This 177-nucleotide RNA was probed chemically with 2A3 and DMS. The DMS profile rests on 40,786 reads. Reactivities are given for positions 27 through 126. DMS adducts were read by reverse transcription with MarathonRT. The RNA was probed in 150 mM KOAc, 10 mM MgCl2 and 150 mM bicine (pH 8.5) at 24 C. For 2A3, 42,278 sequencing reads were counted.
[RMDB]
RNA sequence: GGGAACGACUCGAGUAGAGUCGAAAACUUCUGAACACCUGCCAAGUGAGCCAGGUGGAGGGCUUGGCCCAUCCUAGCUCUGGGACCUCUGCAUGCCCUUGGCCCUGGGAGCCUCAGUGUCCUCGUCGUAAGACUAUAUUUUCGAAUAUAGUCUUACAAAAGAAACAACAACAACAAC
Reactivity to 2A3 in 0.01 (KOAc 150mM, MgCl2 10mM, bicine 150mM(pH8.5), 24C), signal-to-noise 6, nucleotides 027 to 126: c010u090u040c020u050g040a070a010c020a030c020c010u020g020c020c020a240a110g110u090g150a050g060c060c030a030g010g020u040g030g020a060g010g020g010c050u090u100g080g030c000c010c000a060u100c010c030u030a030g020c020u010c030u060g030g010g070a120c000c020u070c030u060g020c030a060u130g020c000c010c000u020u040g030g000c020c000c010u040g000g000g030a030g010c010c010u020c020a030g010u020g040u070c010c010u050c030g100u030c040
Reactivity to DMS in 0.01 (KOAc 150mM, MgCl2 10mM, bicine 150mM(pH8.5), 24C), signal-to-noise 9, nucleotides 027 to 126: c110u010u010c040u010g010a100a130c050a070c030c010u000g010c070c030a140a120g010u010g010a090g020c130c050a020g010g020u000g000g010a060g010g000g010c030u000u000g010g010c030c020c030a070u000c050c030u000a080g000c040u000c040u000g010g000g010a080c040c020u000c060u000g010c070a080u010g010c030c010c020u000u000g010g010c030c090c040u000g000g000g010a100g010c050c030u000c030a050g010u000g010u000c020c010u000c120g010u010c150